[RMDB]
The data come from the RNA Mapping Database (RMDB), library OK3TST. Chemical mapping of a 207-nucleotide RNA with DMS and 2A3. 2A3 adducts were read by reverse transcription with SuperScript II with manganese. Conditions: 150 mM KOAc, 10 mM MgCl2 and 150 mM bicine (pH 8.5), 24 C.

RNA sequence: GGGAACGACUCGAGUAGAGUCGAAAAGCUUGUCCAAAGUGCCUUCCUGAUUGUUACAAUGCUCUUUAUAAUAUCAACUUGCAAUCUUUAUCCCUGCAGUAUGAACUCCCUGAUUGUUCCUCUUGGAGCUCAAAGGACAAGUCCAAGCCUUUGAUCACAAUAAAAUUGGUUUCGACCAAUUUUAUUGAAAAGAAACAACAACAACAAC
Reactivity to DMS in 0.01 (KOAc 150mM, MgCl2 10mM, bicine 150mM(pH8.5), 24C), signal-to-noise 3, nucleotides 027 to 156: g000c030u000u020g020u000c030c020a100a130a170g010u000g010c020c050u000u000c040c000u010g010a080u000u010g010u010u010a090c030a080a120u000g020c020u000c050u000u000u000a120u010a110a110u010a100u000c030a020a060c050u000u000g030c010a070a040u010c080u000u000u000a080u020c010c020c010u000g010c040a090g020u000a080u010g010a060a090c030u000c000c020c000u010g010a090u000u000g010u010u010c040c060u000c050u020u000g000g000a070g020c090u000c020a020a050a140g020g010a070c020a020a060g020u010c060c030a050a180g010c020c010u000u000u000g010a080u000c060a170
Reactivity to 2A3 in 0.01 (KOAc 150mM, MgCl2 10mM, bicine 150mM(pH8.5), 24C), signal-to-noise 5, nucleotides 027 to 156: g020c020u010u030g010u010c000c000a120a070a030g040u040g020c000c020u050u050c030c020u050g070a120u070u140g040u060u040a070c070a110a110u070g040c030u040c030u140u260u130a200u150a200a180u140a050u180c040a040a060c030u050u070g000c030a040a080u030c010u120u240u150a140u120c040c010c010u030g030c020a020g040u090a150u170g050a060a060c030u020c010c020c010u010g030a100u010u100g030u040u020c010c010u010c020u030u060g000g010a010g000c000u010c030a070a090a000g000g010a010c020a030a010g010u010c030c000a040a020g030c010c020u070u060u090g090a060u180c120a010